[RMDB]
This 207-nucleotide RNA was probed chemically with 2A3. It was measured as part of the RMDB library OK3TST. For 2A3 the reverse transcriptase was SuperScript II with manganese. For 2A3, 1,242 sequencing reads were counted.
RNA sequence: GGGAACGACUCGAGUAGAGUCGAAAAUCCUCUCAUCUGGAUUAACUCCACUCCUAGUUUUUCUCAUAUCGCCCAAGAACUGGUGGAAGUAAAAACCAUGAUUCCUGUGGGUUUGAUGGAUAACCAUGCGAUUAUUGGGCCGGUGCGUAUCGACGGACAGUCGAUAUCGGUUCGCCGAUAUCGACUGAAAAGAAACAACAACAACAAC
Reactivity to 2A3 in 0.01 (KOAc 150mM, MgCl2 10mM, bicine 150mM(pH8.5), 24C), signal-to-noise 2, nucleotides 027 to 156: u000c000c000u030c030u040c060a160u070c040u080g010g000a050u040u040a040a020c000u000c000c020a020c010u020c000c050u050a030g000u010u030u010u010u000c060u000c040a070u090a080u140c040g020c000c000c000a020a010g030a050a010c040u040g020g020u020g020g050a070a020g060u140a020a080a060a030a020c000c010a010u030g040a120u080u100c030c010u130g020u200g080g120g000u030u020u040g050a020u020g040g010a050u030a070a030c020c000a010u170g070c060g080a060u060u040a030u100u100g000g000g000c040c060g050g000u060g020c050g020u060a060u180c050g090a000c010g300g010a000